This 177-nucleotide RNA was probed chemically with 2A3 and DMS.
For 2A3 the reverse transcriptase was SuperScript II with manganese.
For DMS the reverse transcriptase was MarathonRT.

RNA sequence: GGGAACGACUCGAGUAGAGUCGAAAAGGCUUUGCCAUGGUGGAAUGGGUCAUUGGGAAUGGAGUCUUCUCUACCCAGUUUGAAUGAGCUUGCUGAUUGGAGCAGUGAAGAUCGAUGGCCACACCUAAUGUGAGAUCCGUUUCGACGGAUCUCACAUAAAAGAAACAACAACAACAAC
Reactivity to 2A3 in 0.01 (KOAc 150mM, MgCl2 10mM, bicine 150mM(pH8.5), 24C), signal-to-noise 1, nucleotides 027 to 126: g010g110c070u150u130u190g030c030c010a170u100g020g020u000g020g060a210a270u090g100g000g000u010c000a030u000u030g110g020g040a070a110u130g070g080a090g050u030c040u080u000c010u000c010u020a030c000c000c000a010g000u000u000u070g140a110a050u100g040a030g100c100u050u100g000c000u030g000a110u050u090g010g080a060g050c000a010g000u000g090a000a000g030a060u070c040g030a000u010g000g000c030c020a030c000a020c050c000u110a140
Reactivity to DMS in 0.01 (KOAc 150mM, MgCl2 10mM, bicine 150mM(pH8.5), 24C), signal-to-noise 1, nucleotides 027 to 126: g040g020c040u000u010u000g020c030c020a070u000g000g010u010g000g010a140a060u010g020g040g030u000c010a040u000u020g010g040g010a140a160u000g000g000a120g000u010c040u000u000c020u000c010u000a130c050c010c000a010g010u000u000u000g000a070a110u000g000a110g020c220u000u010g010c050u020g000a040u000u010g050g030a070g050c020a030g000u010g000a010a020g000a060u000c040g000a060u020g000g000c010c000a100c100a060c030c030u010a080

The DMS profile rests on 1,084 reads. It was measured as part of the RMDB library OK2TRN.